[RMDB]
RNA sequence: GGGAACGACUCGAGUAGAGUCGAAAACAUGCGAAAGGAUGGAAUAGCGUACGGAAACCAUCCGACGGAUGGGAAAGCAUGCACCCGUACGGAAACCAUCCUCGUCGGUGCAUGCGAAAGGAUGGGUGGACACAACCAUCAUACGAGGAUGGGAAAGCUUUAAUCUCGACUUCGGUCGAGAUUAAAGAAAAGAAACAACAACAACAAC
Reactivity to 2A3 in 0.01 (KOAc 150mM, MgCl2 10mM, bicine 150mM(pH8.5), 24C), signal-to-noise 1, nucleotides 027 to 156: c040a050u160g050c030g100a120a000a040g000g010a010u040g050g050a100a100u060a090g100c030g000u030a020c020g010g000a010a010a010c010c000a000u030c000c000g060a010c020g060g070a020u180g010g090g090a040a090a100g000c010a000u010g000c000a000c000c000c000g040u020a020c020g020g030a050a050a000c000c000a000u000c020c010u000c000g040u000c040g000g000u020g000c000a000u010g000c030g020a090a010a000g110g010a000u050g000g040g000u040g000g020a010c010a030c010a050a060c000c000a010u100c020a010u000a020c010g000a020g020g000a000u010g000g000g010a000a080a040g020
Source: RMDB library OK3TST, as collected in RNAgym. The record gives the reactivity of an RNA of 207 nucleotides to 2A3. For 2A3, 696 sequencing reads were counted. The reactions ran in a buffer of 150 mM KOAc, 10 mM MgCl2 and 150 mM bicine (pH 8.5), at 24 C.